[RMDB]
RNA sequence: GGGAACGACUCGAGUAGAGUCGAAAAGAUAUGGACGACUGUUUCGCGAGGAUCUAUACUGAUCAACCCUAUAUCGGAAACGAUAUAGGGUUGAGAUGUAUAGGGAGCGAAACUGUCGUCCUAAGUCGCUCAUAAAUACCUUCGGGUAUUUAUGAGCAAAAGAAACAACAACAACAAC
Reactivity to DMS in 0.01 (KOAc 150mM, MgCl2 10mM, bicine 150mM(pH8.5), 24C), signal-to-noise 1, nucleotides 027 to 126: g010a120u010a300u010g000g000a010c010g000a020c000u000g010u000u010u010c020g030c000g030a080g010g020a020u000c000u000a000u000a010c000u010g000a300u000c000a000a010c010c010c000u000a010u000a000u000c010g000g000a150a130a210c010g030a030u010a000u000a020g000g000g010u000u000g000a000g000a210u000g000u000a000u000a000g050g000g000a040g000c000g010a010a000a000c000u000g010u000c000g000u010c000c000u000a000a080g000u010c090
The record gives the reactivity of an RNA of 177 nucleotides to DMS. The reactions ran in a buffer of 150 mM KOAc, 10 mM MgCl2 and 150 mM bicine (pH 8.5), at 24 C. For DMS, 1,706 sequencing reads were counted. The data come from the RNA Mapping Database (RMDB), library TTRINS. DMS adducts were read by reverse transcription with MarathonRT.